[RMDB]
Chemical mapping of a 177-nucleotide RNA with 2A3 and DMS. The 2A3 profile rests on 4,500 reads.
RNA sequence: GGGAACGACUCGAGUAGAGUCGAAAAGAAUAUAAGAGCGCAGUAAAUGUGAGAGCAAACUGCGCCCGGACUGUAGGAUCCGGUGGCACAGCAACGCUCAAUCACAAUACGCUGUGCCACAUGAAGAGGCCAUUAUGAUAUUCGUAUCAUAAUGGCCAAAAGAAACAACAACAACAAC
Reactivity to 2A3 in 0.01 (KOAc 150mM, MgCl2 10mM, bicine 150mM(pH8.5), 24C), signal-to-noise 5, nucleotides 027 to 126: g020a060a030u210a010u050a110a040g030a000g010c000g000c000a000g020u040a010a140a120u040g010u020g040a070g010a000g060c010a030a290a010c000u000g010c000g000c000c000c000g000g000a000c020u130g070u250a100g090g040a070u000c000c000g000g000u010g000g000c010a000c010a000g000c020a080a080c100g070c070u080c060a070a150u160c050a020c050a110a080u180a100c080g000c000u000g000u010g000c000c000a000c000a020u140g030a050a050g060a060
Reactivity to DMS in 0.01 (KOAc 150mM, MgCl2 10mM, bicine 150mM(pH8.5), 24C), signal-to-noise 3, nucleotides 027 to 126: g000a130a070u120a060u010a070a040g010a090g000c000g000c000a020g000u000a100a120a050u010g000u000g000a210g000a210g000c020a050a150a020c000u000g020c000g000c020c010c000g040g000a000c020u020g030u020a070g060g000a200u000c020c000g000g020u020g000g000c000a020c020a030g000c020a170a210c190g000c040u000c220a070a060u030c130a120c200a090a110u010a060c170g020c000u010g000u000g000c000c000a020c010a040u050g010a040a100g000a160
DMS adducts were read by reverse transcription with MarathonRT.
The reactions ran in a buffer of 150 mM KOAc, 10 mM MgCl2 and 150 mM bicine (pH 8.5), at 24 C.
2A3 adducts were read by reverse transcription with SuperScript II with manganese.